[RMDB]
RNA sequence: GGGAACGACUCGAGUAGAGUCGAAAAGAUUACGUCCCUGCCCUUUGUACACACCGCCCGUCGCUACUACCGAUUGAAUGGCUCAGUGAGGCCUUCGGACUGGCACAGGGACGUUGGCAACGACGACCUUUUCGAGGCAUUUCGAUGCCUCGAAAAGAAAAGAAACAACAACAACAAC
Reactivity to 2A3 in 0.01 (KOAc 150mM, MgCl2 10mM, bicine 150mM(pH8.5), 24C), signal-to-noise 3, nucleotides 027 to 126: g100a010u130u190a000c000g010u020c040c000c000u010g030c020c010c000u110u060u160g200u080a000c080a030c000a030c080c000g000c000c020c020g020u020c080g010c040u030a080c000u000a060c000c000g130a110u070u060g090a140a140u220g030g000c000u010c030a090g080u070g190a040g000g040c000c000u010u030c020g000g000a030c000u000g000g030c040a020c020a040g020g000g000a000c000g000u010u000g030g010c010a090a020c010g060a010c000g010a080c020
Reactivity to DMS in 0.01 (KOAc 150mM, MgCl2 10mM, bicine 150mM(pH8.5), 24C), signal-to-noise 2, nucleotides 027 to 126: g000a100u040u030a000c080g000u000c000c020c020u000g010c300c020c030u040u050u000g000u000a080c200a120c030a110c100c080g000c010c000c030g040u000c010g000c080u000a070c150u000a070c070c000g000a110u020u020g030a090a070u010g000g030c000u030c040a170g000u070g030a060g000g000c000c000u000u000c020g000g000a100c140u000g030g000c070a260c020a050g000g000g000a040c000g020u000u010g000g070c190a120a030c010g000a060c230g000a140c070